[RMDB]
RNA sequence: GGGAACGACUCGAGUAGAGUCGAAAACGUACGGCCGGCUACGCGGCAUGCUAGCUACGGCAUUAUAGCUAUACGCGGCAUAUUAUACGUAAUGCAUGCAUGCGCAUAUCGCGUAAUUAGCGCGCGCGGAGACAGAUUACUUCGGUAAUCUGUCUCCAAAAGAAACAACAACAACAAC
Reactivity to 2A3 in 0.01 (KOAc 150mM, MgCl2 10mM, bicine 150mM(pH8.5), 24C), signal-to-noise 2, nucleotides 027 to 126: c030g080u160a040c040g080g010c000c020g000g070c020u020a020c030g020c050g100g070c050a020u060g000c020u060a030g020c040u030a030c040g000g000c040a000u060u030a040u020a030g000c030u020a010u060a200c120g040c090g160g000c060a080u070a030u080u160a060u030a050c050g020u030a110a000u080g040c070a020u090g010c020a000u060g050c000g020c020a040u060a040u170c030g000c000g040u030a070a130u070u070a030g000c080g010c030g000c010g030c030
Reactivity to DMS in 0.01 (KOAc 150mM, MgCl2 10mM, bicine 150mM(pH8.5), 24C), signal-to-noise 2, nucleotides 027 to 126: c060g000u010a090c130g020g020c000c010g020g010c090u010a000c080g010c000g040g000c110a040u000g010c010u000a250g000c000u000a080c040g000g030c050a070u000u000a040u010a050g030c050u000a030u000a110c210g030c080g000g000c100a050u000a020u010u000a090u000a040c030g010u000a020a040u000g010c020a050u010g010c110a000u010g010c020g010c060a030u010a040u020c020g020c000g010u000a020a060u030u000a120g020c020g010c060g040c040g000c150

An RNA of 177 nucleotides, treated with 2A3 and DMS and read out base by base. The DMS profile rests on 1,522 reads. The 2A3 profile rests on 1,997 reads. In probing experiments dimethyl sulfate is read out at A N1 and C N3, which are open when not base-paired. The reactions ran in a buffer of 150 mM KOAc, 10 mM MgCl2 and 150 mM bicine (pH 8.5), at 24 C.